[RMDB]
An RNA of 207 nucleotides, treated with 2A3 and read out base by base.
Conditions: 150 mM KOAc, 10 mM MgCl2 and 150 mM bicine (pH 8.5), 24 C.
The data come from the RNA Mapping Database (RMDB), library M2RFPK.
Reactivities are given for positions 27 through 156.

RNA sequence: GGGAACGACUCGAGUAGAGUCGAAAAUACCGCAGGCCUGCGGUGCGGCACUGUGGAGACCUGCCGUAAGCCGUGUUGUUUUGACAACCGGGAGAAAGCGUAUGCGGAGGCAGCGCUUUCAGGGUCUAAAAGUAUGGGAUCUUCGGAUCCCAUACAACUAUAUGCCAUCCUUCGGGAUGGCAUAUAGAAAAGAAACAACAACAACAAC
Reactivity to 2A3 in 0.01 (KOAc 150mM, MgCl2 10mM, bicine 150mM(pH8.5), 24C), signal-to-noise 1, nucleotides 027 to 156: u080a010c020c020g010c000a000g000g040c000c070u050g000c020g000g000u020g000c070g000g040c020a050c090u190g030u190g110g080a080g110a200c000c000u000g000c020c020g010u010a060a000g020c000c010g030u020g020u130u010g000u000u030u110u250g120a020c000a010a030c030c000g010g070g000a040g000a000a000a000g000c000g000u070a300u160g000c030g020g050a050g300g060c000a000g020c000g000c000u010u000u010c000a010g000g000g050u000c000u050a070a040a010a010g000u000a000u000g000g010g010a010u010c010u030u040c170g050g010a000u000c000c000c000a000u000a000c000a000a000